[RMDB]
RNA sequence: GGGAACGACUCGAGUAGAGUCGAAAAGUUAUUAUGGAUGUCGUUAAUGCUGAGCAAGCAAGAAUUGCAGAAGAAGCAGGCGCGGUAGCAGUUAUGGCAUUAGAACGAGUACCUUCUGAUAUUAGAGAGGAACCUACAAUUUCGAUUGUAGGUUCCUAAAAGAAACAACAACAACAAC
Reactivity to 2A3 in 0.01 (KOAc 150mM, MgCl2 10mM, bicine 150mM(pH8.5), 24C), signal-to-noise 2, nucleotides 027 to 126: g130u140u090a170u170u160a100u210g070g040a110u160g020u060c170g000u100u000a150a000u150g000c000u060g000a010g270c170a010a240g050c070a100a050g090a070a190u230u070g000c030a000g060a080a000g000a070a190g000c000a020g070g000c000g020c000g020g000u010a080g020c070a010g000u000u210a060u060g020g000c030a030u060u000a000g010a050a000c060g000a000g000u030a070c000c000u040u150c040u020g180a100u020a130u190u180a020g090a000g030
Reactivity to DMS in 0.01 (KOAc 150mM, MgCl2 10mM, bicine 150mM(pH8.5), 24C), signal-to-noise 2, nucleotides 027 to 126: g010u050u020a060u020u000a070u030g000g030a040u000g010u000c000g030u000u010a050a050u000g020c030u000g010a180g020c040a080a110g030c030a050a120g000a080a050u010u000g000c020a050g000a070a060g000a060a130g000c010a050g020g030c100g000c050g000g020u000a090g000c060a030g000u000u000a080u040g010g000c020a010u000u010a060g020a070a070c060g020a090g010u010a010c000c010u010u000c020u000g000a060u030a060u010u000a050g010a100g030